[RMDB]
RNA sequence: GGGAACGACUCGAGUAGAGUCGAAAACACGGGGACUCCACUCUGGGAACGCGACGACACGCGUGAGCGCUUGGCGACCAACGGACGACAAUUGCCGAGGCGGCUCUGAUACCAUUUGUCACGGGCCCAUGUGGCCUUUGUUCGCAAAGGCCACAUGAAAAGAAACAACAACAACAAC
Reactivity to DMS in 0.01 (KOAc 150mM, MgCl2 10mM, bicine 150mM(pH8.5), 24C), signal-to-noise 1, nucleotides 027 to 126: c010a050c060g000g010g010g030a070c020u010c030c010a040c040u000c070u040g000g000g000a090a060c020g000c010g020a160c080g020a180c080a160c090g000c040g010u000g000a050g000c010g000c060u000u010g020g040c030g010a080c030c100a040a160c150g000g000a060c110g000a060c100a110a070u020u010g000c030c010g010a090g010g000c020g010g010c040u020c010u020g020a080u000a040c120c110a030u010u000u000g000u020c030a100c060g000g010g040c040c020